Chemical mapping of a 207-nucleotide RNA with DMS and 2A3. Conditions: 150 mM KOAc, 10 mM MgCl2 and 150 mM bicine (pH 8.5), 24 C. Source: RMDB library OK3TST, as collected in RNAgym. 2A3 adducts were read by reverse transcription with SuperScript II with manganese.
RNA sequence: GGGAACGACUCGAGUAGAGUCGAAAAUAAUUGUGUUAGACCUGUUAAGUUUGGGAAGCCUGUUAGACAUCAAUAUGAUCAUGUCAGAUAAGCAAAUGAAUAUAUAAGUUUGAUGCUUAAGAGGGAGAUUAAGGCUGAAAAUAUACAUCUAGGGGUCCAUACCCAGGAACUUCGGUUCCUGGGUAUGAAAAGAAACAACAACAACAAC
Reactivity to DMS in 0.01 (KOAc 150mM, MgCl2 10mM, bicine 150mM(pH8.5), 24C), signal-to-noise 1, nucleotides 027 to 156: u000a100a110u010u010g020u000g000u020u010a060g030a110c030c020u000g000u000u010a040a110g000u010u010u000g090g000g000a110a200g010c020c020u020g020u000u000a130g000a080c020a070u000c020a020a110u000a060u020g030a150u020c070a070u010g030u010c000a110g020a110u010a120a070g000c070a010a040a110u000g010a090a110u010a110u000a120u000a060a110g000u000u000u010g010a110u010g000c040u020u000a020a110g000a120g010g000g030a070g000a160u000u000a040a040g040g000c030u000g000a090a060a050a080u000a100u000a040c020a030u000c050u000a070g000g000g050g000u010c060
Reactivity to 2A3 in 0.01 (KOAc 150mM, MgCl2 10mM, bicine 150mM(pH8.5), 24C), signal-to-noise 2, nucleotides 027 to 156: u160a020a100u050u030g000u000g010u030u050a060g000a060c000c010u010g060u070u120a140a080g000u020u120u200g040g000g020a040a000g030c000c000u070g030u110u040a070g020a050c010a010u030c010a040a110u130a100u300g080a050u060c050a010u030g050u040c000a010g050a120u090a060a170g000c130a130a060a150u130g010a100a010u220a010u030a020u010a130a040g000u000u120u050g060a020u110g010c000u050u010a070a010g020a030g050g030g010a020g000a010u050u060a010a000g000g000c000u000g030a000a000a030a010u150a010u020a000c010a000u020c010u040a060g000g000g010g020u040c080